Chemical mapping of a 177-nucleotide RNA with DMS and 2A3. 2A3 is a SHAPE reagent: it acylates the 2'-hydroxyl of flexible nucleotides of all four kinds. It was measured as part of the RMDB library OK2TST. For 2A3 the reverse transcriptase was SuperScript II with manganese. Conditions: 150 mM KOAc, 10 mM MgCl2 and 150 mM bicine (pH 8.5), 24 C.
[RMDB]
RNA sequence: GGGAACGACUCGAGUAGAGUCGAAAAGCUGCUCCGCCCAUUUUCACCGAGGCCACGCCCUCUGUGGUCGCCGAUCAGCUGCCCAUUGAGCUGGCCACCAUAUCGAUGGUCAAGAAGGCACCGGUCAACUGGGUACUAAUUUCGAUUAGUACCCAGUAAAAGAAACAACAACAACAAC
Reactivity to DMS in 0.01 (KOAc 150mM, MgCl2 10mM, bicine 150mM(pH8.5), 24C), signal-to-noise 8, nucleotides 027 to 126: g010c020u000g000c050u010c020c120g010c030c040c030a140u000u010u000u010c080a080c070c060g010a100g020g000c030c090a090c160g000c110c020c030u000c060u000g020u000g010g010u000c170g010c040c080g010a060u000c050a040g020c040u000g010c010c000c020a130u000u010g010a080g020c070u010g010g010c020c030a040c020c030a090u010a110u010c140g010a040u000g010g010u000c040a070a090g000a120a110g010g010c030a070c070c040g010g010u000c100a140
Reactivity to 2A3 in 0.01 (KOAc 150mM, MgCl2 10mM, bicine 150mM(pH8.5), 24C), signal-to-noise 3, nucleotides 027 to 126: g000c010u040g030c020u040c020c020g010c010c010c030a090u130u050u090u150c060a050c020c030g020a050g030g000c020c040a080c080g020c030c010c000u030c030u040g020u030g010g020u020c040g000c040c010g020a050u040c020a000g000c010u060g010c010c020c010a060u060u130g040a040g040c040u030g000g000c000c010a020c000c020a060u060a060u190c080g060a050u030g000g010u030c040a020a040g050a030a040g070g000c040a050c030c040g050g000u040c020a030